[RMDB]
RNA sequence: GGGAACGACUCGAGUAGAGUCGAAAAGAUAUGGAAUCUAUACCAGCAACAGCCAUCGAGUCGGAAACGACUCAUGGACAUGCUGGUAGAUUCCUAAGUCAAAGCAUGACACUUCGGUGUCAUGCAAGUGCCUAUUUUCGUUCGCGAAAAUAGGCACAAAAGAAACAACAACAACAAC
Reactivity to DMS in 0.01 (KOAc 150mM, MgCl2 10mM, bicine 150mM(pH8.5), 24C), signal-to-noise 1, nucleotides 027 to 126: g000a040u000a130u000g000g000a000a010u000c010u010a070u040a210c060c010a000g030c020a110a140c230a190g020c000c000a000u000c230g040a040g020u000c000g050g010a020a030a130c000g040a000c030u010c010a000u000g000g000a010c070a170u040g020c020u000g010g030u000a000g010a020u000u000c000c000u000a000a070g000u010c020a070a100a250g010c000a010u000g000a020c000a000c000u000u020c250g000g010u000g000u000c000a010u000g000c040a000a000
Reactivity to 2A3 in 0.01 (KOAc 150mM, MgCl2 10mM, bicine 150mM(pH8.5), 24C), signal-to-noise 1, nucleotides 027 to 126: g000a020u020a000u040g010g000a000a000u000c000u040a180u170a300c030c010a030g000c090a150a210c090a230g010c000c020a030u090c300g000a010g000u000c020g020g000a010a000a010c010g000a000c020u000c000a000u010g000g060a030c070a110u300g020c010u000g010g000u000a000g000a000u000u000c010c000u000a020a020g010u000c050a090a000a010g040c010a000u040g020a000c010a000c000u080u140c300g180g000u020g000u010c000a000u000g000c000a010a000